[RMDB]
RNA sequence: GGGAACGACUCGAGUAGAGUCGAAAAGAUAUGGAACCAGGUAGAUGGCGAAGAACUAUAUCGGAAACGAUAUAGGGAGCCACUACUGGUUCCUAAGUCAAAAUCGAAUCCGGUUCGCCGGAUUCGACGUAAUCGUUGUGUUCGCACAACGAUUACGAAAAGAAACAACAACAACAAC
Reactivity to DMS in 0.01 (KOAc 150mM, MgCl2 10mM, bicine 150mM(pH8.5), 24C), signal-to-noise 2, nucleotides 027 to 126: g000a020u000a300u000g000g020a000a020c010c010a000g020g030u010a010g000a150u000g020g010c010g000a100a210g010a130a140c000u000a000u000a000u000c010g010g000a050a090a200c000g020a000u000a000u000a000g030g030g010a090g030c000c000a020c010u000a010c000u010g010g000u000u000c000c000u010a000a050g000u000c060a110a030a100a200u000c000g010a010a010u000c000c000g000g000u000u030c280g000c000c000g020g000a000u000u000c010g010a010
Reactivity to 2A3 in 0.01 (KOAc 150mM, MgCl2 10mM, bicine 150mM(pH8.5), 24C), signal-to-noise 1, nucleotides 027 to 126: g010a020u090a010u140g020g010a000a020c010c040a010g030g160u050a010g160a300u070g000g020c030g190a300a010g010a060a010c000u010a010u000a000u020c010g040g010a100a030a000c020g000a000u000a000u000a010g000g000g010a010g000c010c000a020c010u030a000c010u000g020g010u000u000c010c010u020a030a010g030u000c030a060a050a000a290u030c000g010a010a000u010c010c000g000g030u080u030c300g070c030c000g000g000a000u010u000c000g010a010